[RMDB]
RNA sequence: GGGAACGACUCGAGUAGAGUCGAAAAGGAGUAAAGAGGACAGAGAGCAGGUUGAAUACCAACAGCGCGGAUCGGAAAGAGACGAUUACCGGAGCGAGUGCGAUAGCCGAGUAGUAGUCGAGUCCUCGUAUCUACAAAGUUUCGACUUUGUAGAUACAAAAGAAACAACAACAACAAC
Reactivity to 2A3 in 0.01 (KOAc 150mM, MgCl2 10mM, bicine 150mM(pH8.5), 24C), signal-to-noise 9, nucleotides 027 to 126: g110g020a050g030u160a060a100a070g020a010g010g010a010c020a030g090a010g010a010g060c050a020g020g060u040u060g080a090a060u150a190c050c010a030a040c020a070g030c020g000c020g060g060a030u040c010g030g070a120a130a020g120a030g010a020c020g020a030u030u090a060c010c010g020g000a040g050c050g040a070g070u140g040c060g070a110u100a050g020c020c010g010a020g020u040a010g000u010a000g010u010c020g020a010g020u010c000c000u010c010
Reactivity to DMS in 0.01 (KOAc 150mM, MgCl2 10mM, bicine 150mM(pH8.5), 24C), signal-to-noise 9, nucleotides 027 to 126: g000g010a120g000u010a040a090a110g010a020g010g000a020c010a100g010a090g000a160g010c040a100g010g010u000u010g010a180a100u040a120c180c030a070a050c070a090g010c080g010c030g000g020a100u010c020g000g000a060a120a120g010a180g010a040c040g000a040u010u010a050c030c010g000g000a110g010c030g000a110g020u030g010c050g000a080u020a080g000c020c010g000a130g010u010a040g010u010a050g020u000c020g000a130g000u000c010c000u010c070